[RMDB]
Structure probing data (DMS and 2A3) for a 177-nucleotide construct. The 2A3 profile rests on 11,211 reads.

RNA sequence: GGGAACGACUCGAGUAGAGUCGAAAACGCAGUGCUGCGCGAGACUCUAUGCCCGUGACAGAGUGGUAUUAGAGCAGACUUGCUUUACAUCAAUGCCCAGCAGUUCACUCGAUGAUGCACAACUCCACUAUCCUUGAUACUUCGGUAUCAAGGAUAGAAAAGAAACAACAACAACAAC
Reactivity to DMS in 0.01 (KOAc 150mM, MgCl2 10mM, bicine 150mM(pH8.5), 24C), signal-to-noise 5, nucleotides 027 to 126: c080g000c060a090g020u000g010c060u000g020c060g000c050g000a140g010a180c010u000c000u000a040u010g010c010c010c020g020u010g020a150c180a110g010a080g020u010g010g010u010a040u000u000a040g010a020g020c080a090g010a090c070u010u000g010c020u000u000u000a070c160a100u010c130a060a090u000g000c020c030c030a110g010c050a060g010u000u010c080a090c030u010c060g010a070u010g000a080u010g000c020a030c080a060a100c060u010c020c060a220
Reactivity to 2A3 in 0.01 (KOAc 150mM, MgCl2 10mM, bicine 150mM(pH8.5), 24C), signal-to-noise 7, nucleotides 027 to 126: c030g020c040a030g020u070g130c050u030g010c080g000c020g040a030g050a080c000u000c000u010a020u060g020c020c010c010g090u120g050a100c110a120g170a040g080u180g040g000u060a100u140u090a040g010a010g020c030a020g050a120c040u070u100g000c010u100u110u110a050c030a050u130c040a070a120u110g020c020c000c000a010g010c010a010g020u090u090c030a020c040u030c040g080a100u090g020a040u100g010c020a020c000a070a070c040u020c030c020a040

Values cover nucleotides 27 to 126. Source: RMDB library VIROID, as collected in RNAgym.